[RMDB]
RNA sequence: GGGAACGACUCGAGUAGAGUCGAAAACUACAUAGACCAUCAGGCCUUGACUUAUCUGAGUUUAAAGGGGAGCUGAUGACUCAAAUCUUAGGUGAAUCUGAUCCUAACAUUAGUAGUGAGGAAGAGCUAUUUUUGCUAUCGAUGUCUGAGCAGUAUACAGUUCAGUAGUGUUCGCACUACUGAACUGAAAAGAAACAACAACAACAAC
Reactivity to DMS in 0.01 (KOAc 150mM, MgCl2 10mM, bicine 150mM(pH8.5), 24C), signal-to-noise 2, nucleotides 027 to 156: c030u010a090c070a130u000a080g040a040c040c000a140u000c120a120g040g070c000c010u000u000g000a080c030u000u020a050u000c100u020g000a080g010u010u000u010a060a130a130g030g000g000g030a150g010c000u010g000a180u000g000a090c020u000c030a070a060a120u000c050u000u010a060g010g040u000g000a070a080u000c050u000g000a100u000c020c020u000a040a050c050a110u000u000a000g020u000a020g040u030g000a120g000g020a100a110g010a120g000c010u000a050u000u000u000u000u000g000c020u000a030u020c030g010a050u000g000u010c020u020g010a110g040c030a070g010u000a150u000a150
Reactivity to 2A3 in 0.01 (KOAc 150mM, MgCl2 10mM, bicine 150mM(pH8.5), 24C), signal-to-noise 5, nucleotides 027 to 156: c030u120a010c030a110u210a030g090a050c030c020a020u020c030a030g080g050c010c020u030u060g020a030c020u070u060a090u270c110u230g060a020g060u040u050u150a080a040a020g020g020g010g030a050g100c020u040g010a030u030g020a030c010u030c060a060a190a170u050c050u090u120a030g000g020u050g060a060a100u060c090u100g020a070u040c010c020u030a040a020c020a040u060u060a030g030u010a010g000u020g070a050g030g020a030a040g030a030g060c030u040a170u020u050u020u060u040g010c040u030a040u150c030g050a050u060g050u070c070u050g050a020g050c020a000g040u080a030u040a120